[RMDB]
The record gives the reactivity of an RNA of 177 nucleotides to DMS. For DMS the reverse transcriptase was MarathonRT. The RNA was probed in 150 mM KOAc, 10 mM MgCl2 and 150 mM bicine (pH 8.5) at 24 C. Source: RMDB library TTRDEL, as collected in RNAgym.
RNA sequence: GGGAACGACUCGAGUAGAGUCGAAAAGAUAUGGACGGUUUCAACAGCACGUCACUCGGAAACGAGUGCGUGACAUGAAACCGUCCUAAGUCAUAGGGAAGCCCACUCUUCGGAGUGGGCUUCCCAACUAGUGAGUGUACUUCGGUACACUCACUAGAAAAGAAACAACAACAACAAC
Reactivity to DMS in 0.01 (KOAc 150mM, MgCl2 10mM, bicine 150mM(pH8.5), 24C), signal-to-noise 2, nucleotides 027 to 126: g000a020u010a250u020g000g030a020c000g010g020u000u000u010c000a040a120c300a140g000c020a010c000g010u030c010a000c000u000c000g000g000a060a080a130c000g010a030g010u000g000c020g000u010g010a020c060a120u000g000a030a010a000c000c000g000u000c000c000u000a000a070g000u010c010a090u000a150g040g000g000a020a010g000c020c000c000a030c000u010c000u000u020c170g010g020a000g030u020g010g000g010c010u000u000c000c000c010a000a020